RNA sequence: GGGAACGACUCGAGUAGAGUCGAAAAUAUUAUUAUCUCCAAAGGGAUGUGCGAUUACUUGCUCAUUGUCUGGGAUAUUAUUAACUGGGCAAAAGAUCAUGGGAUUCCUGUUGGCCCCGGUCGAGGCGGAUUUACGUAGUUUCGACUACGUAAAUCCAAAAGAAACAACAACAACAAC
Reactivity to DMS in 0.01 (KOAc 150mM, MgCl2 10mM, bicine 150mM(pH8.5), 24C), signal-to-noise 3, nucleotides 027 to 126: u090a060u030u030a080u010u010a040u000c010u010c010c070a040a050a070g000g010g000a020u000g000u000g000c050g030a050u000u040a150c190u020u000g000c050u000c020a050u010u000g010u010c040u000g000g000g010a130u000a060u010u020a090u020u030a090a090c080u030g000g010g010c050a030a040a100a210g010a000u000c050a020u020g000g000g020a080u010u000c040c070u010g010u010u000g010g010c020c000c020c110g030g010u000c070g000a100g000g000c230
Reactivity to 2A3 in 0.01 (KOAc 150mM, MgCl2 10mM, bicine 150mM(pH8.5), 24C), signal-to-noise 3, nucleotides 027 to 126: u100a010u180u100a030u070u090a020u020c070u000c040c000a070a080a050g080g020g020a020u070g020u050g100c050g070a090u100u200a130c040u020u140g010c000u000c020a040u000u090g080u030c000u010g010g010g020a040u060a110u280u100a060u010u150a100a070c050u070g020g000g010c020a050a010a060a090g040a070u080c040a030u090g050g060g050a050u080u120c010c030u060g080u160u080g040g000c000c000c000c000g010g020u070c020g000a030g040g050c060
An RNA of 177 nucleotides, treated with DMS and 2A3 and read out base by base. The RNA was probed in 150 mM KOAc, 10 mM MgCl2 and 150 mM bicine (pH 8.5) at 24 C. The data come from the RNA Mapping Database (RMDB), library OK1LIB. The DMS profile rests on 4,621 reads. For 2A3, 1,383 sequencing reads were counted.